RNA sequence: GGGAACGACUCGAGUAGAGUCGAAAAUUGUUCUAGAUCCCAUGCAUGAUGCAUAUCGAUCGAUCUGAUCUGAAUUAGGUCAUCGAUGCGCAUCUGGAUCCCCAUCUUGUUGAUAGUUCAAGAAAGUUGAAUCAUGAAUGUUCGCAUUCAUGAUUCAAAAAGAAACAACAACAACAAC
Reactivity to DMS in 0.01 (KOAc 150mM, MgCl2 10mM, bicine 150mM(pH8.5), 24C), signal-to-noise 2, nucleotides 027 to 126: u010u010g000u000u030c130u010a110g010a090u010c000c010c020a120u000g010c140a120u040g000a010u000g030c010a030u020a000u000c010g000a010u020c170g000a000u000c000u000g010a000u020c300u050g010a090a150u000u000a010g000g010u000c000a040u000c010g020a000u000g000c070g000c000a010u000c000u010g010g000a060u000c030c000c040c030a050u000c060u000u000g050u000u000g000a110u020a120g010u000u000c010a030a030g000a110a020a120g010u000
Reactivity to 2A3 in 0.01 (KOAc 150mM, MgCl2 10mM, bicine 150mM(pH8.5), 24C), signal-to-noise 2, nucleotides 027 to 126: u050u080g140u060u050c060u080a110g000a050u000c000c030c020a070u170g060c150a050u180g020a020u000g000c000a000u000a000u030c000g000a000u020c030g020a000u000c000u000g030a020u000c100u170g190a300a150u030u010a010g000g000u000c000a000u010c000g000a000u000g000c020g000c000a000u000c000u030g000g010a000u060c000c000c000c000a020u050c090u040u010g000u060u000g050a230u020a260g080u120u020c130a030a000g020a110a080a100g120u000